This 170-nucleotide RNA was probed chemically with 2A3 and DMS. Values cover nucleotides 27 to 129. The RNA was probed in 150 mM KOAc, 10 mM MgCl2 and 150 mM bicine (pH 8.5) at 24 C.
RNA sequence: GGGAACGACUCGAGUAGAGUCGAAAACGAGUGUCCCCCCGGAGGGAGAGAACCACGCGGAGAAGGCGGAAAAAUCACCUCCAGAGGACCCCUUCAGCGAACAGAAGAGCCCCGCACGGGAUAGGAGAAACUACAGUCUUCGGACUGUAGAAAAGAAACAACAACAACAAC
Reactivity to 2A3 in 0.01 (KOAc 150mM, MgCl2 10mM, bicine 150mM(pH8.5), 24C), signal-to-noise 6, nucleotides 027 to 129: c030g010a050g050u100g070u040c000c010c010c010c000c020g020g010a020g020g030g010a180g000a010g010a100a010c040c000a070c070g030c040g040g060a090g020a100a050g070g020c060g010g000a050a080a020a020a020u060c030a060c020c000u040c040c020a010g020a050g030g010a060c000c000c020c000u040u030c010a010g040c010g020a030a010c020a040g050a100a010g010a040g030c000c000c030c010g020c030a030c070g020g000g020a010u090a050g020g010a050g060a030a070a000
Reactivity to DMS in 0.01 (KOAc 150mM, MgCl2 10mM, bicine 150mM(pH8.5), 24C), signal-to-noise 8, nucleotides 027 to 129: c030g030a000g030u060g020u050c030c020c000c050c070c050g000g000a060g000g030g020a140g030a030g000a100a060c100c130a150c100g060c100g000g030a120g020a070a120g010g020c120g080g000a010a060a040a070a070u050c040a100c040c020u000c070c090a120g010a070g030g010a110c140c040c020c020u000u000c080a080g030c030g000a010a010c050a090g000a080a050g000a120g000c150c050c040c020g040c120a080c020g000g000g000a070u010a070g000g000a060g020a060a050a090